RNA sequence: GGGAACGACUCGAGUAGAGUCGAAAAUGGCACUGAAAGAUGAUGCCGUCCUCAUUGCCGCGCGGGGGUACGUGUACACCGCUGCGGUCGGCACGGCGGCACCUACCCCUUCUCAGCUCAAGCUGAUCGACCUGGAGCACCCCGAGGCGUGGGACCGGCUUACCAUCUUCUUCGGAAGAUGGUAAGCAAAAGAAACAACAACAACAAC
Reactivity to 2A3 in 0.01 (KOAc 150mM, MgCl2 10mM, bicine 150mM(pH8.5), 24C), signal-to-noise 1, nucleotides 027 to 156: u030g000g020c000a010c050u090g120a050a130a040g100a050u170g030a070u080g000c030c000g020u120c020c000u110c050a170u120u270g060c020c000g040c000g020c000g020g000g050g020g010u000a000c020g090u110g000u080a170c030a040c010c000g140c120u120g040c020g080g000u120c000g080g070c010a040c070g000g000c000g010g000c000a000c000c000u090a090c010c000c000c000u070u000c030u000c010a040g000c030u120c290a000a140g040c010u050g040a090u010c050g050a030c040c030u040g000g020a000g040c040a150c040c040c000c000g010a070g020g000c020g010u070g000g050g000a000c020c000g000